RNA sequence: GGGAACGACUCGAGUAGAGUCGAAAAGCAAAGAAAUAUUAUCCCAAUAAGGCGAAGUAAGCAAGUCGACCCAACGCGAGGGCGCUAGCGAGCUUACGAGCCCUAGCAGAAUAAUCGCGAGAAAAAACAUGUAAGUAGGCUUCGGCCUACUUACAUGAAAAGAAACAACAACAACAAC
Reactivity to DMS in 0.01 (KOAc 150mM, MgCl2 10mM, bicine 150mM(pH8.5), 24C), signal-to-noise 2, nucleotides 027 to 126: g000c160a140a050a120g020a050a050a090u000a060u000u010a120u000c010c000c000a120a150u020a080a140g000g010c000g000a080a110g000u000a020a030g010c020a140a080g030u000c010g000a130c010c010c010a040a080c040g000c090g030a030g020g000g020c030g020c050u000a040g000c130g020a170g000c010u000u000a030c040g000a300g000c010c000c050u000a070g000c100a100g000a100a030u000a060a110u000c000g000c020g020a210g000a000a010a080a100a080a100
Reactivity to 2A3 in 0.01 (KOAc 150mM, MgCl2 10mM, bicine 150mM(pH8.5), 24C), signal-to-noise 2, nucleotides 027 to 126: g030c020a000a080a110g160a110a250a000u290a070u160u090a070u040c000c030c000a000a050u120a050a000g030g000c040g010a020a010g000u030a010a000g030c010a000a060g010u060c010g110a300c020c010c000a010a110c030g010c010g010a030g010g010g000c020g000c010u010a020g030c000g110a020g000c000u030u000a010c030g020a000g000c000c000c000u000a030g000c070a040g050a210a040u130a140a050u020c010g000c000g020a070g160a060a060a050a000a020a010